[RMDB]
RNA sequence: GGGAACGACUCGAGUAGAGUCGAAAAGAAACGCCGUUAACUUGACAGUGGCUCUCAAGGAAAGCUAUGAUGGAGGAUUCAAACCUCGAGGUGCUCCAGUUUCAGUUUUCGUUGGAAACUCGAAGGAAUGCUAGUGGAGUUUCGACUCCACUAGCAUAAAAGAAACAACAACAACAAC
Reactivity to DMS in 0.01 (KOAc 150mM, MgCl2 10mM, bicine 150mM(pH8.5), 24C), signal-to-noise 1, nucleotides 027 to 126: g000a090a130a080c140g010c030c030g030u000u020a110a150c040u010u000g000a090c160a060g040u000g020g000c030u010c070u000c020a060a040g030g000a050a090a040g010c020u000a060u010g000a040u010g030g000a050g000g000a090u010u000c070a030a130a160c100c030u010c100g020a050g020g030u000g000c030u000c010c020a080g000u010u010u000c060a000g000u010u000u000u000c030g000u000u000g020g000a040a070a120c030u010c030g010a090a120g000g010a110